[RMDB]
Structure probing data (DMS and 2A3) for a 177-nucleotide construct.
The 2A3 profile rests on 870 reads.
RNA sequence: GGGAACGACUCGAGUAGAGUCGAAAAGUAUUGCCGGAAGCGUGGCCUGUAUCCGGAUGCAGAGUCUUAUCCGUGGAAAUCGAACGCGCAUUACUGGUUGGUUACCAACUUGUACCAGAACAUGCGGGUAGGUUCAGCUAUUCGUAGCUGAACCUACAAAAGAAACAACAACAACAAC
Reactivity to DMS in 0.01 (KOAc 150mM, MgCl2 10mM, bicine 150mM(pH8.5), 24C), signal-to-noise 2, nucleotides 027 to 126: g010u000a060u000u010g030c010c020g030g010a060a150g020c110g020u020g010g040c060c010u000g030u000a110u000c080c050g000g000a110u000g010c050a110g000a120g010u000c070u000u000a050u000c040c000g010u000g020g000a040a130a070u010c040g010a080a130c100g020c040g010c030a030u000u000a300c000u000g010g000u000u000g000g000u000u020a130c180c260a090a050c030u000u010g000u000a050c000c010a030g000a030a070c300a020u000g020c000g020g010
Reactivity to 2A3 in 0.01 (KOAc 150mM, MgCl2 10mM, bicine 150mM(pH8.5), 24C), signal-to-noise 1, nucleotides 027 to 126: g000u030a110u160u120g000c020c020g040g030a050a040g080c090g070u050g040g030c000c000u010g020u080a070u060c060c070g090g050a020u010g040c020a020g100a060g140u010c010u060u210a080u000c000c000g040u100g070g140a050a060a030u140c070g010a130a000c080g010c010g000c220a000u000u040a080c000u000g020g000u020u040g000g020u030u030a270c050c070a040a030c010u050u120g080u080a020c010c010a010g010a040a020c010a040u050g030c070g000g070

DMS (dimethyl sulfate) methylates the pairing face of unpaired adenines and cytosines. Reactivities are given for positions 27 through 126.